Structure probing data (2A3 and DMS) for a 177-nucleotide construct.
RNA sequence: GGGAACGACUCGAGUAGAGUCGAAAACGUGUGAUUCGAGGCAGCCUAGUAUUGCGGCAUUUCAUGAUAGCAGAGAUAAAGAGGGCUAAUGGGAUGGGAGAUAAUACAACUAGGUAUUAUGCAAUGGACGCUGGUGUUAUUUCGAUAACACCAGCGUAAAAGAAACAACAACAACAAC
Reactivity to 2A3 in 0.01 (KOAc 150mM, MgCl2 10mM, bicine 150mM(pH8.5), 24C), signal-to-noise 1, nucleotides 027 to 126: c020g000u030g030u030g070a130u030u120c080g050a040g090g000c020a010g000c010c000u000a050g000u030a050u060u100g020c020g060g030c060a030u020u020u020c020a020u040g150a060u080a050g000c020a000g020a000g000a110u070a210a080a020g070a070g000g000g070c020u050a060a050u040g000g000g000a010u060g010g030g010a110g040a070u030a040a010u080a050c030a130a000c120u050a000g070g000u020a050u070u050a030u050g010c050a090a080u070g080g020
Reactivity to DMS in 0.01 (KOAc 150mM, MgCl2 10mM, bicine 150mM(pH8.5), 24C), signal-to-noise 1, nucleotides 027 to 126: c110g010u000g000u000g010a120u000u000c030g030a150g010g010c030a110g020c020c020u000a050g030u010a050u000u000g020c050g050g010c030a050u000u000u000c070a030u010g040a120u000a040g000c060a080g000a150g030a110u050a020a130a140g010a180g000g000g010c060u010a070a130u020g020g010g010a030u000g000g000g000a110g010a080u000a030a020u000a040c040a210a220c180u000a010g020g000u000a030u000u000a010u000g000c150a070a100u000g000g040
As a SHAPE reagent, 2A3 marks flexible, mostly unpaired nucleotides at the ribose 2'-OH. The data come from the RNA Mapping Database (RMDB), library OK2TST.